[RMDB]
RNA sequence: GGGAACGACUCGAGUAGAGUCGAAAAAUUGGGAUUUGUUGCCCGCUACAGCCCGCACGUUUUGUGUGUGCAGGAGGUGUGGCGGCCACUUCCGGCUAUUAGUACAUCCCUUCACGGCGCGGCAUUAGACUCCUGCUAGGUUCGCCUAGCAGGAGUCAAAAGAAACAACAACAACAAC
Reactivity to DMS in 0.01 (KOAc 150mM, MgCl2 10mM, bicine 150mM(pH8.5), 24C), signal-to-noise 1, nucleotides 027 to 126: a180u000u000g010g010g000a070u000u000u000g040u010u010g010c250c030c040g030c010u000a020c010a050g020c000c010c010g000c020a020c000g000u010u010u010u010g000u000g020u010g010u000g010c000a060g060g010a060g000g020u000g050u010g000g000c010g020g000c040c030a030c020u010u000c020c020g030g050c090u010a060u010u000a150g050u000a080c150a080u000c030c000c000u000u000c040a070c040g000g000c090g020c020g030g030c110a130u000u010a080